This 177-nucleotide RNA was probed chemically with 2A3 and DMS. The RNA was probed in 150 mM KOAc, 10 mM MgCl2 and 150 mM bicine (pH 8.5) at 24 C. For DMS, 8,740 sequencing reads were counted.

RNA sequence: GGGAACGACUCGAGUAGAGUCGAAAAAACACCUUGGGUACGUGGCUCAGCUGCACUGGAUCAGGGCUGUGCAGGCUGUGAGAUCUCAGAAGCUCCCUGUGUUGGGAGAGCCCGUCUGUGGGCGGAAAUUAUAGACUCACUUCGGUGAGUCUAUAAUAAAAGAAACAACAACAACAAC
Reactivity to 2A3 in 0.01 (KOAc 150mM, MgCl2 10mM, bicine 150mM(pH8.5), 24C), signal-to-noise 2, nucleotides 027 to 126: a000a000c100a070c030c000u080u060g030g000g000u100a060c050g010u090g100g040c010u020c050a020g010c010u050g010c010a020c020u020g020g050a120u190c080a100g000g080g040c020u060g020u030g010c030a050g140g040c030u030g010u050g050a070g000a100u020c040u010c040a050g030a200a010g010c000u010c000c030c010u140g040u060g060u210u120g000g000g000a030g000a010g030c000c000c000g060u040c100u150g110u130g060g000g000c000g020g020a040a110
Reactivity to DMS in 0.01 (KOAc 150mM, MgCl2 10mM, bicine 150mM(pH8.5), 24C), signal-to-noise 5, nucleotides 027 to 126: a080a050c100a100c030c030u000u000g010g000g020u000a040c120g010u010g010g010c030u000c050a040g010c030u000g000c040a050c040u000g000g010a120u000c090a080g000g000g010c040u000g010u000g000c040a030g010g000c020u000g010u000g000a120g000a110u010c030u000c030a110g010a130a110g000c020u000c010c000c000u000g010u010g000u010u010g010g000g000a060g000a090g000c040c010c000g010u010c100u010g010u010g020g000g010c010g000g000a060a070
The 2A3 profile rests on 2,056 reads.